[RMDB]
RNA sequence: GGGAACGACUCGAGUAGAGUCGAAAACGGUACUAUGAAUUGAUGCAAGGUGUGGAGCGACCUUAAACAGUUCUGGUGGUGCUCUGAAUGGAGUGCUCUACUGAGAUAAUAAAAUAGAAGGUAAGCUGAAGGGGAAAUGAGUUCGCUCAUUUCCCAACAAUAAAGUCUACUUCGGUAGACUUUAUUGAAAAGAAACAACAACAACAAC
Reactivity to DMS in 0.01 (KOAc 150mM, MgCl2 10mM, bicine 150mM(pH8.5), 24C), signal-to-noise 2, nucleotides 027 to 156: c070g000g020u000a040c040u000a090u000g010a090a070u010u000g000a090u000g020c100a010a070g010g010u010g000u000g020g000a070g050c050g020a130c020c030u000u000a050a090a150c030a080g000u000u010c040u000g000g020u010g030g050u000g030c030u010c040u010g010a100a130u000g010g020a090g080u000g000c010u010c030u000a070c010u010g010a120g010a100u010a070a140u000a060a060a050a110u000a070g010a100a100g000g030u000a060a130g000c030u000g030a080a120g040g000g000g000a030a020a000u010g010a050g010u000u010c300g000c010u000c000a000u000u000u010c000c000c000a000a020
Reactivity to 2A3 in 0.01 (KOAc 150mM, MgCl2 10mM, bicine 150mM(pH8.5), 24C), signal-to-noise 7, nucleotides 027 to 156: c040g020g050u080a050c030u060a070u180g030a050a060u110u040g050a040u080g090c040a030a010g020g010u020g020u050g040g020a010g000c020g010a020c010c000u060u090a060a100a010c020a040g010u030u020c010u040g030g020u030g000g010u020g010c010u010c020u070g120a090a080u230g020g000a020g010u040g010c010u010c010u040a040c020u030g040a030g020a080u080a120a030u060a050a180a040a010u100a040g060a080a010g030g020u050a030a050g020c040u050g110a060a080g010g000g000g000a000a000a000u000g000a000g030u040u110c150g040c060u000c000a000u000u000u000c000c000c000a000a000

An RNA of 207 nucleotides, treated with DMS and 2A3 and read out base by base.
Values are in units of 0.01, from 0 to 300, in steps of 10.
For 2A3, 7,736 sequencing reads were counted.
Values cover nucleotides 27 to 156.
For DMS, 3,681 sequencing reads were counted.